This 177-nucleotide RNA was probed chemically with 2A3 and DMS.
RNA sequence: GGGAACGACUCGAGUAGAGUCGAAAACGUAACUAUCUACAAAGAGGAUCAAGAGAUUUGCGGAAGCAAGCGAGUGACGAACUGAGCGUAUAUCAAGAUACGUGACAGGAAGGAACAAGCGUAGCUGGAGUGCAUUACGUUUCGACGUAAUGCACUCAAAAGAAACAACAACAACAAC
Reactivity to 2A3 in 0.01 (KOAc 150mM, MgCl2 10mM, bicine 150mM(pH8.5), 24C), signal-to-noise 7, nucleotides 027 to 126: c020g030u030a020a030c050u040a060u070c020u070a070c060a090a160a020g090a060g100g040a070u100c060a100a040g030a020g030a140u020u020u100g020c020g020g030a040a000g020c020a050a010g010c020g010a010g020u010g020a020c020g020a250a080c020u020g010a010g010c010g010u010a010u010a020u120c140a100a000g050a280u010a000c010g040u070g200a120c020a010g020g020a040a010g020g000a000a020c010a030a000g020c020g050u120a030g000c030u070g060
Reactivity to DMS in 0.01 (KOAc 150mM, MgCl2 10mM, bicine 150mM(pH8.5), 24C), signal-to-noise 6, nucleotides 027 to 126: c070g000u000a080a100c120u010a050u000c030u000a060c110a030a080a090g040a070g000g020a060u020c100a080a110g010a060g000a090u000u000u000g020c050g010g020a080a060g010c020a060a090g000c050g010a220g030u000g000a160c040g010a130a120c010u010g010a300g000c010g000u000a000u000a170u010c150a090a100g000a030u010a010c030g010u000g010a140c070a020g010g000a070a120g010g000a140a060c070a030a180g010c050g010u010a090g010c050u000g020
The reactions ran in a buffer of 150 mM KOAc, 10 mM MgCl2 and 150 mM bicine (pH 8.5), at 24 C. As a SHAPE reagent, 2A3 marks flexible, mostly unpaired nucleotides at the ribose 2'-OH.